[RMDB]
RNA sequence: GGGAACGACUCGAGUAGAGUCGAAAAGGGGCCGUCGGCCACGCAUUGCAUCAACUUCGAUGCUUGCGCGGCGACGUCCAUGGUGGUGACGAAGUUGGUUAUCGCAACCUCGGCUUGCAUCAUCCACCUACCACGGGCAGUUCGCUGCCCGUGGUAGAAAAGAAACAACAACAACAAC
Reactivity to 2A3 in 0.01 (KOAc 150mM, MgCl2 10mM, bicine 150mM(pH8.5), 24C), signal-to-noise 2, nucleotides 027 to 126: g020g000g050g070c050c030g000u000c010g170g170c020c000a000c010g000c000a010u040u170g000c000a000u020c020a070a180c160u300u100c270g000a000u000g000c000u000u000g000c000g020c000g000g000c010g000a010c020g000u020c020c000a010u040g000g040u000g000g000u030g010a040c030g060a010a010g030u070u070g070g100u130u050a160u260c150g000c150a020a010c000c000u010c040g040g000c030u060u090g080c000a020u010c000a000u000c000c010a020c000
Reactivity to DMS in 0.01 (KOAc 150mM, MgCl2 10mM, bicine 150mM(pH8.5), 24C), signal-to-noise 1, nucleotides 027 to 126: g010g010g010g010c080c030g040u000c000g000g010c000c000a030c000g000c000a010u010u010g000c000a000u000c000a210a260c300u020u010c120g020a000u000g010c000u000u000g010c000g030c050g030g000c000g000a010c000g010u000c000c000a020u010g000g000u040g010g030u020g000a070c010g000a010a020g040u010u000g000g000u000u010a150u030c300g000c120a010a010c010c030u000c080g010g010c090u000u000g000c030a080u000c030a040u000c020c000a040c090
Description
The data come from the RNA Mapping Database (RMDB), library OK2TST. The record gives the reactivity of an RNA of 177 nucleotides to 2A3 and DMS. The 2A3 profile rests on 1,694 reads. The DMS profile rests on 1,162 reads. Values cover nucleotides 27 to 126. 2A3 adducts were read by reverse transcription with SuperScript II with manganese. In probing experiments dimethyl sulfate is read out at A N1 and C N3, which are open when not base-paired. The reactions ran in a buffer of 150 mM KOAc, 10 mM MgCl2 and 150 mM bicine (pH 8.5), at 24 C.